The record gives the reactivity of an RNA of 177 nucleotides to DMS and 2A3. Conditions: 150 mM KOAc, 10 mM MgCl2 and 150 mM bicine (pH 8.5), 24 C. The data come from the RNA Mapping Database (RMDB), library OK2TST. For DMS the reverse transcriptase was MarathonRT.
RNA sequence: GGGAACGACUCGAGUAGAGUCGAAAAAGUAAAACCAGUAAUGUUAGGUUAGUAAUUAUUGACUAUUUACAACUUGUUAAUGCUUUAAAAAAUAACUAUGGUUUGACAAGACAACAAGAAGUGACAAGACCUGAAUAAGGUUCGCCUUAUUCAGGUCAAAAGAAACAACAACAACAAC
Reactivity to DMS in 0.01 (KOAc 150mM, MgCl2 10mM, bicine 150mM(pH8.5), 24C), signal-to-noise 2, nucleotides 027 to 126: a090g010u000a000a040a030a030c020c050a020g010u000a130a110u000g000u000u000a040g000g010u010u000a050g020u000a050a030u000u000a030u000u000g020a050c110u010a050u010u000u010a060c060a030a130c080u000u000g000u000u000a110a070u000g000c060u000u010u000a000a010a110a040a060a070u000a010a040c130u000a060u000g000g020u000u010u000g000a110c070a040a090g000a020c110a020a040c080a080a070g010a070a120g000u000g000a060c190a080a130
Reactivity to 2A3 in 0.01 (KOAc 150mM, MgCl2 10mM, bicine 150mM(pH8.5), 24C), signal-to-noise 2, nucleotides 027 to 126: a000g080u080a000a020a050a010c010c010a000g060u070a070a160u050g040u050u080a020g080g010u090u020a010g000u080a090a170u100u110a110u080u080g050a020c020u030a050u060u090u060a070c050a120a020c030u060u010g020u090u030a120a040u120g010c000u070u090u040a100a100a030a030a030a060u100a060a030c030u000a090u050g020g050u010u030u040g000a000c010a020a060g010a060c010a050a000c000a030a060g090a060a060g110u070g190a060c010a090a040